[RMDB]
RNA sequence: GGGAACGACUCGAGUAGAGUCGAAAAGAUAUGGAUCUGCAAACCACCGAAGUACUUGGACCUCGGAAACGAGCUAGUACCGGUGGGACGUAUAGAUCCUAAGUCAAAACCCCUGUUCGCAGGGGAACUCGGUGUUAUAGUUCGCUAUAACACCGAGAAAAGAAACAACAACAACAAC
Reactivity to DMS in 0.01 (KOAc 150mM, MgCl2 10mM, bicine 150mM(pH8.5), 24C), signal-to-noise 2, nucleotides 027 to 126: g020a040u040a300u010g000g000a000u000c010u000g040c010a160a300a300c000c000a020c000c000g030a070a140g010u000a000c000u020u000g030g010a160c300c000u000c000g000g000a060a050a240c000g000a000g030c010u000a010g000u000a040c010c000g030g060u000g010g010g000a020c300g020u020a100u020a000g030a010u000c000c000u000a000a040g000u000c000a060a070a150a130c000c000c010c010u000g000u000u030c170g000c060a020g050g000g000g000a000a030
Reactivity to 2A3 in 0.01 (KOAc 150mM, MgCl2 10mM, bicine 150mM(pH8.5), 24C), signal-to-noise 3, nucleotides 027 to 126: g020a010u090a030u170g000g000a020u000c010u010g000c030a070a150a270c030c000a000c010c000g070a300a080g020u000a010c000u090u130g160g180a300c060c000u020c000g010g000a020a070a040c010g020a000g000c020u020a000g000u010a000c020c000g010g000u000g000g000g000a000c030g020u130a150u130a300g010a000u000c000c000u010a070a040g100u070c040a020a030a130a300c030c000c010c000u000g020u090u070c290g020c080a000g010g010g020g010a000a030